Source: RMDB library OK1LIB, as collected in RNAgym. Chemical mapping of a 177-nucleotide RNA with DMS and 2A3. The RNA was probed in 150 mM KOAc, 10 mM MgCl2 and 150 mM bicine (pH 8.5) at 24 C. As a SHAPE reagent, 2A3 marks flexible, mostly unpaired nucleotides at the ribose 2'-OH. DMS adducts were read by reverse transcription with MarathonRT.
RNA sequence: GGGAACGACUCGAGUAGAGUCGAAAAUUUGGCUUGCACAACCUUGGAUCCGGCGAUGUUGAAGUUGGAUGAGGGCGAAGGGUGGUACCGCUGGAGUGUUGCGAGGUGAGUACACUGUAUAACACAGAGACGAAUCCAGAUUCGUCUGGAUUCGUCUAAAAGAAACAACAACAACAAC
Reactivity to DMS in 0.01 (KOAc 150mM, MgCl2 10mM, bicine 150mM(pH8.5), 24C), signal-to-noise 3, nucleotides 027 to 126: u020u050u010g010g010c010u020u000g000c100a020c090a070a100c040c010u000u060g010g020a060u000c000c030g020g020c030g010a080u000g000u000u010g000a060a230g000u000u000g000g020a070u020g020a160g000g020g020c030g030a120a070g040g000g030u000g010g000u020a050c040c090g010c020u000g020g000a070g010u010g000u000u050g000c070g000a040g020g010u010g030a150g010u020a050c130a120c000u060g000u010a050u010a080a100c200a050c070a060g010
Reactivity to 2A3 in 0.01 (KOAc 150mM, MgCl2 10mM, bicine 150mM(pH8.5), 24C), signal-to-noise 2, nucleotides 027 to 126: u140u070u120g020g000c000u010u050g000c000a030c020a190a090c020c000u000u020g050g030a050u020c000c000g000g000c070g050a090u130g000u050u110g090a050a110g000u070u060g010g010a060u020g070a080g000g050g000c020g030a030a000g050g020g050u060g000g040u080a100c000c030g020c020u020g000g080a070g060u110g000u040u010g010c020g010a050g050g000u000g010a050g040u050a030c040a000c020u020g060u030a170u070a150a040c100a000c000a030g070